[RMDB]
RNA sequence: GGGAACGACUCGAGUAGAGUCGAAAAGAAAGAAAGAAUGUAGGGCAAUCUGUCUUUAAGUAGGGAUAAAUUACUCUUGAACAAAAUGAUCCUAGAUAGUUUUCCCUUCAAGUCAAGCGUCUUGCAACAGCUGGUCAAGAUUCGUCUUGACCAGCUGAAAAGAAACAACAACAACAAC
Reactivity to 2A3 in 0.01 (KOAc 150mM, MgCl2 10mM, bicine 150mM(pH8.5), 24C), signal-to-noise 2, nucleotides 027 to 126: g110a030a040a000g030a010a100a000g030a040a070u030g000u030a030g000g000g000c040a050a100u010c020u010g060u000c000u020u100u060a190a060g030u010a050g030g000g010a020u070a090a020a040u060u050a060c080u020c010u070u040g030a090a030c080a050a120a090a190u200g060a020u020c020c040u040a020g000a020u020a010g010u000u000u020u000c000c000c000u020u020c020a050a000g030u010c010a020a010g000c030g070u020c000u040u030g000c000a100a050
Reactivity to DMS in 0.01 (KOAc 150mM, MgCl2 10mM, bicine 150mM(pH8.5), 24C), signal-to-noise 1, nucleotides 027 to 126: g020a070a020a160g000a050a120a100g050a050a080u010g020u000a060g000g000g000c000a020a050u060c040u030g000u000c020u000u000u000a020a130g030u060a120g000g000g000a000u040a010a000a050u000u020a040c170u000c000u000u000g060a100a040c300a020a090a100a100u010g000a120u000c060c110u030a030g000a040u000a030g000u000u000u000u000c000c000c000u000u060c050a020a070g000u030c020a030a010g000c300g050u000c020u000u040g000c070a060a160
Background
The record gives the reactivity of an RNA of 177 nucleotides to 2A3 and DMS. Values cover nucleotides 27 to 126. The DMS profile rests on 1,294 reads. 2A3 is a SHAPE reagent: it acylates the 2'-hydroxyl of flexible nucleotides of all four kinds. DMS adducts were read by reverse transcription with MarathonRT. The reactions ran in a buffer of 150 mM KOAc, 10 mM MgCl2 and 150 mM bicine (pH 8.5), at 24 C.